[RMDB]
RNA sequence: GGGAACGACUCGAGUAGAGUCGAAAAGACUAGCCGUAGUGGCGAGCUCCCUGGGUGGUCUAAGUCCUGAGUACAGGACAGUCGUCAGUAGUUCGACGUGAGCACUAGCCCACCUCGAGAUGCUACGUGGACGAGGGCAUGCCCAAGACACACCUUAUCGGAUAAUAUUCUUCGGAAUAUUAUCCGAAAAAGAAACAACAACAACAAC
Reactivity to DMS in 0.01 (KOAc 150mM, MgCl2 10mM, bicine 150mM(pH8.5), 24C), signal-to-noise 3, nucleotides 027 to 156: g030a090c010u000a080g020c010c000g030u000a190g010u020g010g020c000g000a040g050c020u000c020c000c010u000g010g020g030u000g000g010u000c050u000a060a090g020u000c000c000u010g010a230g030u000a100c020a030g010g020a030c010a200g000u000c020g030u000c010a100g020u000a030g020u030u000c010g010a040c060g000u000g000a020g000c000a220c280u000a190g000c000c020c000a020c020c030u010c010g010a060g020a080u000g010c000u000a020c010g000u010g010g020a040c000g000a090g020g020g050c020a090u000g000c000c030c110a200a080g000a040c010a060c020a020c020c000u000u000a160
Reactivity to 2A3 in 0.01 (KOAc 150mM, MgCl2 10mM, bicine 150mM(pH8.5), 24C), signal-to-noise 7, nucleotides 027 to 156: g060a060c020u020a000g000c010c010g140u170a100g140u160g170g000c000g000a000g000c010u010c020c000c010u020g020g000g000u000g010g000u000c000u010a030a020g000u000c000c000u000g020a040g190u020a020c010a000g000g000a010c010a020g060u010c000g000u000c000a030g010u010a010g030u100u030c010g000a010c010g010u010g010a030g000c020a050c300u180a070g000c010c010c000a000c000c010u000c000g070a080g020a140u210g030c010u020a030c070g300u120g020g020a000c010g020a110g010g000g000c020a040u160g010c010c000c000a000a000g020a000c170a030c000a010c060c000u030u070a100